Record summary: Conditions: 150 mM KOAc, 10 mM MgCl2 and 150 mM bicine (pH 8.5), 24 C. An RNA of 177 nucleotides, treated with 2A3 and DMS and read out base by base. It was measured as part of the RMDB library OK2TRN. For 2A3 the reverse transcriptase was SuperScript II with manganese. The DMS profile rests on 11,827 reads.
RNA sequence: GGGAACGACUCGAGUAGAGUCGAAAAUCUGGGCCCAGCUCAAGAAGAGCCCGUCCUUCGCCCGCGUGAGGGCCACGUAGAAGAGUCUCCGUUCUUCCUCGAUAUCCUCGGGACUCGAAGCCGCCCACACUCUAUCUUUAUUCGUAAAGAUAGAGUGAAAAGAAACAACAACAACAAC
Reactivity to 2A3 in 0.01 (KOAc 150mM, MgCl2 10mM, bicine 150mM(pH8.5), 24C), signal-to-noise 7, nucleotides 027 to 126: u040c020u030g010g020g010c000c040c020a030g010c010u020c080a140a270g120a150a030g010a170g030c000c020c030g070u070c010c000u040u090c070g060c020c030c020g030c040g020u040g060a160g000g020g000c010c010a010c020g030u050a030g030a300a020g020a040g050u010c070u030c110c020g040u070u030c030u090u050c020c020u050c030g080a100u050a090u220c020c040u010c000g020g010g030a070c010u010c020g010a020a000g020c040c040g010c010c010c000a020
Reactivity to DMS in 0.01 (KOAc 150mM, MgCl2 10mM, bicine 150mM(pH8.5), 24C), signal-to-noise 8, nucleotides 027 to 126: u010c060u010g020g010g020c020c050c090a140g010c040u000c080a120a150g010a160a160g000a120g000c020c070c110g020u010c020c020u010u000c090g010c040c020c050g010c100g010u010g010a080g010g010g010c020c050a010c050g010u000a070g000a100a110g000a040g010u000c020u010c040c050g000u000u000c040u000u000c040c040u000c080g010a110u010a100u000c050c030u000c020g010g000g000a050c020u000c010g000a080a110g010c090c070g010c000c010c020a300